[RMDB]
RNA sequence: GGGAACGACUCGAGUAGAGUCGAAAACUUCUGGUAGCUUCGGCUCCAGCAAUCACUAGGGGAUGCCUGUAAACCCGAACUGAUUGUCAUACAGAACAGGAUCGUCGCGUAGCACGUUGUGGGCGAAGUGACUAAAACUUACACAACUCAUCCAAAGCAAAAUCGCUUAGUUCGCUAAGCGAUUUUGAAAAGAAACAACAACAACAAC
Reactivity to 2A3 in 0.01 (KOAc 150mM, MgCl2 10mM, bicine 150mM(pH8.5), 24C), signal-to-noise 1, nucleotides 027 to 156: c010u090u100c010u010g070g040u270a020g000c010u030u030c210g080g000c000u000c000c000a000g000c000a000a000u020c020a000c070u040a030g000g000g020g000a000u080g000c000c000u000g030u020a080a090a010c000c000c000g000a030a020c020u000g000a000u010u000g060u100c030a030u200a230c100a050g150a120a000c000a020g030g000a000u000c000g000u000c000g000c000g060u070a000g000c000a030c010g000u000u000g000u010g000g000g000c000g060a120a000g000u000g000a000c000u000a000a000a000a000c050u130u200a070c000a000c000a000a050c000u000c080a200u070c050c060a000a050a060g030
This 207-nucleotide RNA was probed chemically with 2A3. Conditions: 150 mM KOAc, 10 mM MgCl2 and 150 mM bicine (pH 8.5), 24 C. For 2A3, 716 sequencing reads were counted. Source: RMDB library ARCHII, as collected in RNAgym.